Conditions: 150 mM KOAc, 10 mM MgCl2 and 150 mM bicine (pH 8.5), 24 C. An RNA of 177 nucleotides, treated with DMS and 2A3 and read out base by base. DMS adducts were read by reverse transcription with MarathonRT. The 2A3 profile rests on 11,338 reads.

RNA sequence: GGGAACGACUCGAGUAGAGUCGAAAAGAUAUGGAUCUGUUAGCCUUCGAUAAGCUAGGGUCGGAAACGACCCAUAGCUUUUGACGAAGUGAACAGAUCCUAAGUCAAACGAGAGUUCGCUCUCGAACUUAUGACUAGGGUUCGCCCUAGUCAUAAGAAAAGAAACAACAACAACAAC
Reactivity to DMS in 0.01 (KOAc 150mM, MgCl2 10mM, bicine 150mM(pH8.5), 24C), signal-to-noise 6, nucleotides 027 to 126: g000a060u000a300u010g000g000a000u000c000u000g010u000u000a200g020c220c010u000u000c010g020a210u000a000a020g000c000u000a020g010g020g020u000c000g000g000a080a120a240c020g010a010c000c010c000a040u010a000g010c000u000u000u000u000g020a260c150g000a010a010g010u010g010a040a000c010a010g010a000u000c000c000u010a020a100g010u010c050a080a110a180c020g010a090g000a020g010u000u010c200g020c000u010c000u000c000g020a080a160
Reactivity to 2A3 in 0.01 (KOAc 150mM, MgCl2 10mM, bicine 150mM(pH8.5), 24C), signal-to-noise 4, nucleotides 027 to 126: g040a010u050a050u190g010g000a000u010c000u020g030u040u060a160g210c010c020u010u000c030g090a120u020a170a010g010c010u010a010g020g010g000u020c020g010g010a090a110a030c020g000a000c020c010c000a010u000a010g000c020u010u010u010u020g050a030c040g010a010a020g050u140g110a010a010c010a000g000a000u000c010c010u000a040a010g010u010c050a090a050a120c030g000a010g010a000g010u130u180c300g080c120u010c000u000c010g000a090a030